[RMDB]
RNA sequence: GGGAACGACUCGAGUAGAGUCGAAAAGAUGAUGAAGCUGUAAAGACCAUUGAAGAAGGUGCUCUUGAACAGGUUUCAAAUGUGGCCUGCAUGCCUGGUAUUCAAGGGGCAUCAAUCGCCAUGCCUGGAGCAGCCUAUAGUUCGCUAUAGGCUGCUCAAAAGAAACAACAACAACAAC
Reactivity to DMS in 0.01 (KOAc 150mM, MgCl2 10mM, bicine 150mM(pH8.5), 24C), signal-to-noise 2, nucleotides 027 to 126: g000a090u000g000a190u000g010a050a030g000c000u010g000u010a040a020a070g000a080c050c000a010u000u000g050a200a090g020a210a040g000g060u000g000c190u000c050u000u000g000a040a050c020a040g000g050u000u010u010c070a020a100a070u000g010u000g010g050c000c100u000g010c110a010u000g000c000c010u020g010g000u020a060u010u010c190a010a090g070g000g010g050c000a000u000c120a040a090u040c140g000c010c010a020u000g000c100c010u000g010
Reactivity to 2A3 in 0.01 (KOAc 150mM, MgCl2 10mM, bicine 150mM(pH8.5), 24C), signal-to-noise 3, nucleotides 027 to 126: g030a000u140g000a030u060g010a030a030g090c030u000g010u190a120a030a040g050a080c080c030a040u080u130g100a120a110g050a040a040g080g000u000g000c000u010c000u030u000g030a050a070c030a020g050g050u000u130u230c140a040a090a070u170g050u020g040g100c010c070u070g020c080a000u000g000c010c010u050g060g040u150a230u120u130c060a050a040g110g000g010g000c000a000u000c000a000a070u070c020g070c010c010a040u030g020c000c000u090g050